[RMDB]
This 177-nucleotide RNA was probed chemically with 2A3 and DMS. The RNA was probed in 150 mM KOAc, 10 mM MgCl2 and 150 mM bicine (pH 8.5) at 24 C. For 2A3, 4,388 sequencing reads were counted. The data come from the RNA Mapping Database (RMDB), library M2PK50.

RNA sequence: GGGAACGACUCGAGUAGAGUCGAAAAAACAGCUGCUUCGGCAGCUGUUAACGCUCGCGGCUCGAGGCUGCACGAGCCGGACAGCAGCCAGUCCGCGAGCAAUAGCCUUGGAGUUCGCUCCAAGGAAUAACCAUCUUGAUUUCGAUCAAGAUGGUUAAAAAGAAACAACAACAACAAC
Reactivity to 2A3 in 0.01 (KOAc 150mM, MgCl2 10mM, bicine 150mM(pH8.5), 24C), signal-to-noise 2, nucleotides 027 to 126: a010a000c000a000g010c000u010g020c020u050u100c210g130g020c010a000g010c000u000g000u010u010a000a000c060g020c000u000c000g000c010g000g000c030u030c030g100a130g010g000c000u010g000c040a070c180g060a080g120c060c010g030g070a030c040a030g000c000a000g000c000c000a010g040u020c000c000g020c000g010a000g000c000a000a000u040a010g030c000c000u000u000g000g000a000g020u080u090c130g090c100u000c000c000a000a000g000g000a000a010
Reactivity to DMS in 0.01 (KOAc 150mM, MgCl2 10mM, bicine 150mM(pH8.5), 24C), signal-to-noise 4, nucleotides 027 to 126: a030a000c000a000g010c010u000g010c000u000u010c170g030g020c000a010g010c000u000g010u000u000a040a070c200g010c000u000c010g010c020g000g010c100u000c040g000a090g000g010c000u010g010c000a100c100g010a130g020c100c090g010g000a120c140a140g010c010a010g020c010c010a140g000u000c000c000g000c010g000a000g000c010a020a010u010a110g000c010c000u000u000g010g000a020g000u010u010c220g010c000u000c000c000a000a010g010g000a070a050